[RMDB]
RNA sequence: GGGAACGACUCGAGUAGAGUCGAAAAGAUACAUUUCAGUUACAUUGGAGGAAUAUGUUCUAGGGAUCUAUAGUAGGACAUGGUGACUGGAAAAUUGCUAAGAGAGUAGAUGUUAAGUGUCCUCACCGGACGUACUAGGGUUCGCCCUAGUACGUCCAAAAGAAACAACAACAACAAC
Reactivity to 2A3 in 0.01 (KOAc 150mM, MgCl2 10mM, bicine 150mM(pH8.5), 24C), signal-to-noise 2, nucleotides 027 to 126: g040a020u190a040c040a110u000u000u040c000a010g020u020u020a010c030a040u130u200g160g010a090g000g120a110a070u150a020u090g010u000u000c000u000a030g110g100g120a100u070c090u230a040u110a170g080u000a000g020g010a000c000a010u050g050g000u020g000a030c020u020g000g030a020a030a050a090u110u060g040c020u060a140a000g170a020g000a020g100u060a020g040a090u140g030u060u120a130a030g030u070g010u030c000c000u020c010a040c000c020
Reactivity to DMS in 0.01 (KOAc 150mM, MgCl2 10mM, bicine 150mM(pH8.5), 24C), signal-to-noise 2, nucleotides 027 to 126: g010a160u010a060c110a190u000u010u000c020a030g000u000u000a030c030a160u020u020g000g010a110g030g000a150a210u000a030u000g000u000u030c010u000a060g040g000g000a090u020c180u000a060u010a080g030u000a030g000g000a020c040a020u000g020g020u000g000a010c020u000g000g000a010a030a080a070u030u010g000c090u000a120a070g010a120g000a070g020u000a070g000a090u010g010u000u000a090a060g000u010g000u000c020c020u000c070a120c180c190